The record gives the reactivity of an RNA of 177 nucleotides to 2A3 and DMS. DMS (dimethyl sulfate) methylates the pairing face of unpaired adenines and cytosines. The RNA was probed in 150 mM KOAc, 10 mM MgCl2 and 150 mM bicine (pH 8.5) at 24 C. For 2A3 the reverse transcriptase was SuperScript II with manganese. The data come from the RNA Mapping Database (RMDB), libraries RFM100 and RFMREP. DMS adducts were read by reverse transcription with MarathonRT.
RNA sequence: GGGAACGACUCGAGUAGAGUCGAAAAAAAGCGUAGCUGCAGCCCCUGAUGUUCUCCACUGCUAGGGUCAGAGAGCGUCGUGUCGAGCGCAGCAAAGCCAAGACGCCACACACAUCCAAUACGGCGCAAGCUAUGAGUUGUUCGCAACUCAUAGCUUAAAAGAAACAACAACAACAAC
Reactivity to 2A3 in 0.01 (KOAc 150mM, MgCl2 10mM, bicine 150mM(pH8.5), 24C), signal-to-noise 6, nucleotides 027 to 126: a000a010a000g050c040g020u050a010g000c000u010g000c010a070g000c010c000c000c010u020g010a010u010g010u000u020c000u000c020c040a060c060u070g090c120u190a150g150g040g060u090c070a030g010a000g010a010g020c000g000u000c010g010u020g050u110c100g030a020g030c000g000c010a000g000c000a030a070a010g010c010c010a020a000g070a020c010g000c010c000a050c000a000c000a010c010a130u050c030c010a110a040u130a100c080g010g000c000g010c030
Reactivity to DMS in 0.01 (KOAc 150mM, MgCl2 10mM, bicine 150mM(pH8.5), 24C), signal-to-noise 6, nucleotides 027 to 126: a060a050a100g000c030g010u020a220g000c020u000g030c030a130g020c010c030c020c040u020g010a030u000g000u000u010c010u000c020c300a090c040u000g030c170u070a100g010g010g010u010c300a110g020a030g020a020g000c010g030u020c000g020u010g010u020c080g020a120g010c000g000c020a030g020c020a020a060a230g000c010c070a050a090g000a090c030g020c000c000a110c160a090c170a050c150a060u030c010c020a070a080u030a060c120g000g010c000g030c040